[RMDB]
This 170-nucleotide RNA was probed chemically with DMS and 2A3. DMS adducts were read by reverse transcription with MarathonRT. For DMS, 3,057 sequencing reads were counted. The data come from the RNA Mapping Database (RMDB), library 15KLIB.
RNA sequence: GGGAACGACUCGAGUAGAGUCGAAAACAACUGUUAUCUUGCCACUGCAUUGUUAACACUCCAACAAAUAGAGUUGAAGUUUAAUCCACCUGCUCUACAAAGGGAUGGUGAAGCUGCUAACUUUUGUCCGGUGGCGUCUUCGGACGCCACAAAAGAAACAACAACAACAAC
Reactivity to DMS in 0.01 (KOAc 150mM, MgCl2 10mM, bicine 150mM(pH8.5), 24C), signal-to-noise 2, nucleotides 027 to 129: c110a050a130c180u050g060u010u000a070u050c180u020u060g000c040c200a090c030u050g020c000a050u010u100g010u000u000a090a100c050a000c010u020c020c040a020a130c080a040a060a050u010a100g020a050g000u000u040g040a000a060g030u030u060u000a130a050u000c110c070a000c040c040u010g040c000u030c030u000a090c140a070a160a100g010g120g010a160u030g100g000u140g000a010a220g020c040u010g040c050u010a000a000c050u120u000u000u000g030u020c050c020g000
Reactivity to 2A3 in 0.01 (KOAc 150mM, MgCl2 10mM, bicine 150mM(pH8.5), 24C), signal-to-noise 2, nucleotides 027 to 129: c070a010a040c050u080g020u040u100a040u050c080u050u140g000c000c000a120c010u100g000c000a050u000u110g100u000u010a000a000c060a050c110u030c000c010a020a020c020a000a260a030u160a040g030a000g020u040u000g050a090a030g030u000u010u170a080a000u040c000c030a000c010c010u130g000c000u020c010u060a110c020a000a120a080g020g000g000a030u070g030g000u000g040a030a030g000c000u000g060c000u050a000a000c000u000u000u060u010g020u000c000c000g020